Structure probing data (2A3 and DMS) for a 207-nucleotide construct. The data come from the RNA Mapping Database (RMDB), library OK3TST. Reactivities are given for positions 27 through 156. Conditions: 150 mM KOAc, 10 mM MgCl2 and 150 mM bicine (pH 8.5), 24 C.
RNA sequence: GGGAACGACUCGAGUAGAGUCGAAAAAAAGGAUGGGUGUAGAAGGAGGUAGAUUGGUGAUGAGAAGUUAAGGUAGUUCACCUCUGAUUACUUAAUUUUCUCUAAGAAGUAGGAAGUGCAUCGCUUCUUGGUCUUUUGGCUAAGAUCAAGUGUAGAAGCUAAUCAUCGAUUUCGAUCGAUGAUUAGCAAAAGAAACAACAACAACAAC
Reactivity to 2A3 in 0.01 (KOAc 150mM, MgCl2 10mM, bicine 150mM(pH8.5), 24C), signal-to-noise 4, nucleotides 027 to 156: a000a000a000g070g010a050u070g010g020g020u070g010u070a050g020a110a040g010g010a020g000g020u040a020g010a110u060u090g010g020u040g040a080u090g010a010g000a030a010g000u030u040a030a010g070g050u040a040g080u050u090c050a110c070c070u090c110u080g030a040u000u050a030c010u010u030a010a030u090u170u080u050c020u000c000u030a090a100g030a100a010g070u090a030g030g060a050a010g020u020g040c020a080u090c070g010c080u090u060c000u000u060g010g010u000c010u040u040u050u120g130g030c130u050a020a000g000a010u010c010a010a000g020u010g020u080a060g020a150a030
Reactivity to DMS in 0.01 (KOAc 150mM, MgCl2 10mM, bicine 150mM(pH8.5), 24C), signal-to-noise 2, nucleotides 027 to 156: a070a060a050g030g010a090u010g040g010g010u000g040u000a020g020a140a040g010g010a110g040g010u000a030g030a140u000u010g020g020u000g030a130u020g000a030g000a050a080g010u000u000a050a040g010g010u000a030g020u020u000c050a140c120c110u010c110u010g000a090u000u000a040c010u000u010a040a030u000u000u010u000c030u000c020u020a110a100g010a050a020g060u000a060g020g000a080a070g050u010g010c030a060u000c070g000c050u000u000c010u010u000g010g010u000c010u000u000u000u000g040g010c100u000a030a010g020a040u000c020a030a030g030u000g000u000a100g020a120a190